[RMDB]
RNA sequence: GGGAACGACUCGAGUAGAGUCGAAAAGAUACACUAACUGCAUCUCCCUUAUCGGGCUUAAGGAAUCAAACGCAGUUGGAUUCUAAAGACAGUGUUCCAUCUCUCGAGGCUUAUACACCAAUUGAUUCUGUCUCUGACGUGCCCACUGGGGAGAUCAACCCUAACGGAUGUUCGCAUCCGUUAGGGUAAAAGAAACAACAACAACAAC
Reactivity to 2A3 in 0.01 (KOAc 150mM, MgCl2 10mM, bicine 150mM(pH8.5), 24C), signal-to-noise 2, nucleotides 027 to 156: g030a000u170a010c140a040c080u110a140a000c060u040g080c020a020u070c020u020c000c010c040u000u120a170u130c060g000g070g040c070u130u120a120a090g000g060a020a000u010c060a080a060a050c130g040c200a070g030u010u030g030g010a010u130u100c060u130a030a200a000g030a000c020a130g000u020g070u220u000c040c020a080u030c010u000c000u020c010g030a060g090g000c040u090u130a100u070a140c070a030c130c050a040a040u020u070g020a010u080u140c020u060g070u030c020u000c060u180g030a030c060g090u140g020c010c000c010a000c110u030g020g000g000g020a010g020a000u020c010a000
Annotation:
This 207-nucleotide RNA was probed chemically with 2A3. The RNA was probed in 150 mM KOAc, 10 mM MgCl2 and 150 mM bicine (pH 8.5) at 24 C. For 2A3 the reverse transcriptase was SuperScript II with manganese. For 2A3, 532 sequencing reads were counted. It was measured as part of the RMDB library OK3TST.